[RMDB]
RNA sequence: GGGAACGACUCGAGUAGAGUCGAAAAUUCCUCUUGUUAGGUGAAAGUUGAUGGUCGCCGAGCCAGUCCGUACAUCCAAAAAGGACUCUAUGUAGUAGGAAGUCGAGAGCCUAUGAGAGUUAGAGUCAUGCCUAUUUUGUGUUCGCACAAAAUAGAACUUAGUAACUUGGUUCGCCAAGUUACUAAGAAAAGAAACAACAACAACAAC
Reactivity to 2A3 in 0.01 (KOAc 150mM, MgCl2 10mM, bicine 150mM(pH8.5), 24C), signal-to-noise 2, nucleotides 027 to 156: u030u010c000c000u010c030u020u050g050u030u060a060g010g010u030g050a100a080a100g060u100u090g070a090u080g050g020u030c030g040c090c020g010a010g010c000c020a020g060u010c020c010g040u030a080c030a070u030c080c020a090a110a030a020a030g120g000a000c000u010c010u030a030u100g040u020a030g010u000a000g020g040a080a030g040u110c110g040a010g030a030g190c000c000u020a020u040g040a090g010a030g110u040u040a010g000a000g020u000c020a040u090g030c000c010u000a000u000u010u000u000g010u000g020u010u060c160g020c060a000c000a020a000a000a000u010a000g010a020a010
Reactivity to DMS in 0.01 (KOAc 150mM, MgCl2 10mM, bicine 150mM(pH8.5), 24C), signal-to-noise 4, nucleotides 027 to 156: u000u000c010c000u000c120u000u030g010u000u000a070g010g020u000g010a070a110a140g000u000u000g030a130u000g020g020u000c030g020c020c020g020a150g010c020c020a130g010u010c020c040g040u010a100c050a090u000c060c050a020a050a110a110a080g000g010a030c010u000c020u000a050u000g010u000a300g020u000a030g020g000a070a080g010u010c110g010a210g010a210g010c010c020u000a030u000g000a220g020a210g010u000u000a040g000a090g010u000c020a060u000g020c100c000u000a010u000u000u000u000g020u010g020u000u010c300g010c000a020c000a010a000a020a000u000a020g010a070a130

This 207-nucleotide RNA was probed chemically with 2A3 and DMS. Conditions: 150 mM KOAc, 10 mM MgCl2 and 150 mM bicine (pH 8.5), 24 C. For 2A3 the reverse transcriptase was SuperScript II with manganese. It was measured as part of the RMDB library M2RFPK.